[RMDB]
RNA sequence: GGGAACGACUCGAGUAGAGUCGAAAAGUGGUCCAGGUUGGUGCUCCUGUAAGGAGAAAGUCGGGAUGAGUGAGGCCAGAGCCUGCAGGGAGCCCGUCUGGCCAAGAAUCACUAUGGGGUGCUCUGGCUGCGGGUUGGCGGCAGGCAUCUUGCAGGAAUAUAAUACUGGGUUCGCCCAGUAUUAUAUAAAAGAAACAACAACAACAAC
Reactivity to 2A3 in 0.01 (KOAc 150mM, MgCl2 10mM, bicine 150mM(pH8.5), 24C), signal-to-noise 1, nucleotides 027 to 156: g100u050g020g030u160c000c040a040g000g010u180u220g050g020u170g040c010u020c030c000u080g030u110a100a130g010g040a070g090a120a050a050g050u040c070g050g050g030a090u050g090a050g110u150g050a080g030g050c010c020a010g010a050g050c000c000u020g020c000a000g000g110g000a010g010c040c000c000g000u000c050u100g010g010c010c000a010a010g040a010a050u120c050a010c110u080a170u280g020g050g030g050u020g020c030u060c020u140g210g010c030u010g000c020g110g070g000u090u130g090g010c000g010g000c020a010g000g000c000a000u000c000u040u040g010c030a010g000g080a030
Reactivity to DMS in 0.01 (KOAc 150mM, MgCl2 10mM, bicine 150mM(pH8.5), 24C), signal-to-noise 1, nucleotides 027 to 156: g050u000g030g030u000c010c040a160g000g020u000u000g000g010u010g040c000u000c000c000u000g040u030a220a070g010g000a080g010a080a080a160g040u000c050g020g010g040a230u020g010a160g010u000g010a130g000g000c030c030a120g020a240g000c000c020u000g000c090a120g030g000g010a070g010c010c010c010g010u010c030u080g030g020c000c010a010a140g010a090a130u000c020a060c060u000a150u010g010g020g000g030u000g000c050u000c010u000g020g020c010u000g040c040g040g000g010u000u000g020g020c010g030g020c030a070g000g000c000a080u000c040u010u010g010c000a080g000g020a130
Description: Source: RMDB library OK3TST, as collected in RNAgym. The record gives the reactivity of an RNA of 207 nucleotides to 2A3 and DMS. Values cover nucleotides 27 to 156. The reactions ran in a buffer of 150 mM KOAc, 10 mM MgCl2 and 150 mM bicine (pH 8.5), at 24 C.